[RMDB]
RNA sequence: GGGAACGACUCGAGUAGAGUCGAAAAGAAAGACAGAGAUAAGGCAAAGAAUCAGGAAGCUAGGAGAGGCAAGAUGAGCCCAGGAGGUGAGGUAUCAGAUGGCUGAUCUAUUAAGGUUUUUGGACUUCAUCCUGAGGGCAACGAGAGGUGUGGCCCACUAGCCACGAGUGUUCGCACUCGUGGCUAGAAAAGAAACAACAACAACAAC
Reactivity to 2A3 in 0.01 (KOAc 150mM, MgCl2 10mM, bicine 150mM(pH8.5), 24C), signal-to-noise 1, nucleotides 027 to 156: g070a010a050a040g040a010c070a020g000a010g020a090u080a120a000g040g000c060a120a050a060g080a080a050u110c030a000g070g070a110a020g020c070u150a060g010g030a040g010a010g000g010c010a000a030g020a070u100g000a020g020c000c000c000a020g050g080a010g000g080u030g000a000g040g000u040a100u100c030a030g040a130u060g120g000c040u010g030a060u040c050u130a110u130u150a110a120g020g020u000u020u070u010u090g010g010a040c000u030u000c030a020u000c040c010u040g030a130g000g000g010c010a040a000c040g030a020g000a010g080g010u080g010u030g060g020c000c000c000a030